[RMDB]
RNA sequence: GGGAACGACUCGAGUAGAGUCGAAAAAACUGGUUGCUGAAGCAGCAUAAGCUCCCUGAUGUAAGCUCCCUGAAUAAAUUCACAGCAAUACAUCAAAGUAGUAUGAAAGUUGGCCAGUAUAAAUAAACUUGUGAAGCACAUUCGUGUGCUUCACAAGAAAAGAAACAACAACAACAAC
Reactivity to DMS in 0.01 (KOAc 150mM, MgCl2 10mM, bicine 150mM(pH8.5), 24C), signal-to-noise 1, nucleotides 027 to 126: a100a010c000u060g030g000u000u000g030c020u040g000a170a130g010c090a050g020c010a020u020a180a070g000c000u000c040c040c040u000g000a000u000g020u000a000a210g000c000u000c010c050c030u000g000a010a070u010a100a050a190u010u000c000a070c120a030g040c000a020a040u000a000c000a000u000c000a000a040a020g030u010a070g000u000a050u010g000a010a060a120g000u000u000g000g010c010c000a000g010u000a010u010a020a160a000u040a010a020a120
Reactivity to 2A3 in 0.01 (KOAc 150mM, MgCl2 10mM, bicine 150mM(pH8.5), 24C), signal-to-noise 1, nucleotides 027 to 126: a000a000c000u000g010g000u000u010g000c000u010g050a030a020g040c040a010g000c040a040u000a080a050g020c000u000c000c040c000u000g010a000u000g000u020a000a060g000c010u060c020c000c000u000g010a010a030u160a300a140a200u000u000c040a020c060a000g000c000a000a110u010a060c000a000u000c000a040a040a000g010u060a000g030u000a010u050g060a050a000a000g120u200u220g070g000c000c000a000g000u070a080u050a300a050a000u120a000a000a030
Conditions: 150 mM KOAc, 10 mM MgCl2 and 150 mM bicine (pH 8.5), 24 C. The record gives the reactivity of an RNA of 177 nucleotides to DMS and 2A3. It was measured as part of the RMDB library RFM100.